[RMDB]
RNA sequence: GGGAACGACUCGAGUAGAGUCGAAAAAGAACUAGCGAUUGUAAAAGGCUGUUUGCGCUAAGAUAUGGAAUUAGCGCAAAUAGGUCCGAAUUCCUUGAUAACAUUUCCGACAACCGCGCUAAAACAAAUCGAUGACAUGAUUCGUCAUGUCAUCGAUAAAAGAAACAACAACAACAAC
Reactivity to DMS in 0.01 (KOAc 150mM, MgCl2 10mM, bicine 150mM(pH8.5), 24C), signal-to-noise 1, nucleotides 027 to 126: a060g020a090a040c170u010a090g000c010g010a050u000u000g010u000a080a080a080a220g010g000c030u010g010u010u000u000g010c000g020c030u000a010a010g020a170u020a260u010g020g010a070a140u010u000a000g000c000g000c000a010a000a010u000a010g040g020u020c010c060g000a040a170u010u000c030c010u010u020g000a040u010a060a120c140a100u000u000u000c020c040g000a040c040a030a010c040c030g000c050g030c120u010a020a040a050a050c200a030a110
Reactivity to 2A3 in 0.01 (KOAc 150mM, MgCl2 10mM, bicine 150mM(pH8.5), 24C), signal-to-noise 2, nucleotides 027 to 126: a010g080a010a030c040u040a010g000c020g050a040u060u130g040u140a000a020a090a090g030g000c010u010g030u020u000u020g000c010g000c000u000a000a000g080a100u170a160u300g200g000a080a160u000u000a010g000c000g000c000a010a000a000u000a000g010g010u030c000c000g000a040a080u040u010c000c000u030u060g080a050u090a120a070c070a140u030u080u030c010c040g000a010c020a020a020c060c010g000c010g000c140u120a010a020a090a050c030a000a210

Background:
This 177-nucleotide RNA was probed chemically with DMS and 2A3. It was measured as part of the RMDB library M2PK90. Conditions: 150 mM KOAc, 10 mM MgCl2 and 150 mM bicine (pH 8.5), 24 C. Values cover nucleotides 27 to 126.